[RMDB]
The data come from the RNA Mapping Database (RMDB), library OK3TST. This 207-nucleotide RNA was probed chemically with 2A3 and DMS. The reactions ran in a buffer of 150 mM KOAc, 10 mM MgCl2 and 150 mM bicine (pH 8.5), at 24 C. 2A3 adducts were read by reverse transcription with SuperScript II with manganese. The DMS profile rests on 1,825 reads. For DMS the reverse transcriptase was MarathonRT.
RNA sequence: GGGAACGACUCGAGUAGAGUCGAAAAGUUGAUAAAUAUAUAACUGUAUAUCUGCCUGUUUUAUACUGUGUCAUAUUGCCUCACUUCUACACUGAUUGCAUUGAUAUUAAAUGUAUUUGUGUUCCUUAAUGAUAAGGAUGGUGCAUGGUAGAAAGAAUAUUUAAUUUACCUUCGGGUAAAUUAAAUAAAAAGAAACAACAACAACAAC
Reactivity to 2A3 in 0.01 (KOAc 150mM, MgCl2 10mM, bicine 150mM(pH8.5), 24C), signal-to-noise 1, nucleotides 027 to 156: g000u010u000g050a050u090a300a230a050u230a030u050a040u070a120a070c030u110g000u000a190u040a080u110c040u110g040c030c000u020g010u040u150u080u060a070u000a050c080u010g000u000g010u070c010a010u040a130u000u200g040c000c000u050c040a030c000u070u000c010u040a010c000a000c050u010g130a090u000u080g000c010a010u100u090g100a060u120a110u300u220a030a050a030u010g000u010a030u030u120u030g110u010g000u000u020c010c010u100u070a270a080u280g060a080u080a180a000g000g000a000u060g010g000u020g030c060a030u110g000g060u040a080g150a120a080a000g150a020a000
Reactivity to DMS in 0.01 (KOAc 150mM, MgCl2 10mM, bicine 150mM(pH8.5), 24C), signal-to-noise 1, nucleotides 027 to 156: g050u000u000g000a170u000a090a080a120u010a110u020a080u000a100a120c010u020g000u000a070u000a080u000c050u020g040c040c000u000g020u010u000u040u000a070u000a030c080u020g020u000g020u010c020a090u000a200u020u000g000c000c090u010c070a080c080u010u000c010u000a040c010a080c030u000g010a070u000u010g050c000a030u000u000g000a100u020a060u000u020a020a040a090u020g020u000a020u020u010u020g020u010g020u010u010c010c050u010u000a040a080u010g010a190u020a060a030g010g000a050u000g050g040u010g010c000a040u010g040g020u000a080g020a070a080a120g010a170a270